[RMDB]
An RNA of 207 nucleotides, treated with 2A3 and read out base by base. Source: RMDB library M2RFPK, as collected in RNAgym. The RNA was probed in 150 mM KOAc, 10 mM MgCl2 and 150 mM bicine (pH 8.5) at 24 C. Reactivities are given for positions 27 through 156.
RNA sequence: GGGAACGACUCGAGUAGAGUCGAAAAACAUAUUACGAUAUGAUUCAGAUGGUGUCUUACUGGUUCGUACCAAGGGACAUAAUGGUUUCUUGUUUCCAACCAAAGAACAAGUGACGAGCCUGAAUAAAAAACUGACUGCCGUUCGCGGCAGUCAGAACUAUGUUGACAGCUUCGGCUGUCAACAUAGAAAAGAAACAACAACAACAAC
Reactivity to 2A3 in 0.01 (KOAc 150mM, MgCl2 10mM, bicine 150mM(pH8.5), 24C), signal-to-noise 1, nucleotides 027 to 156: a000c000a020u120a050u180u140a100c060g070a040u010a010u160g090a050u090u110c020a040g070a140u100g120g140u090g060u060c030u030u080a090c030u070g000g010u060u090c110g070u130a080c010c010a030a050g000g050g010a020c030a010u210a040a110u090g040g000u000u020u000c000u000u000g050u010u020u000c030c020a080a110c050c000a030a280a070g010a010a000c000a080a000g080u040g030a030c020g000a010g050c000c010u040g030a080a040u160a070a140a050a000a000a000c000u000g010a000c000u000g060c000c000g040u060u010c210g000c000g060g010c000a000g000u000c000a000g000a000a000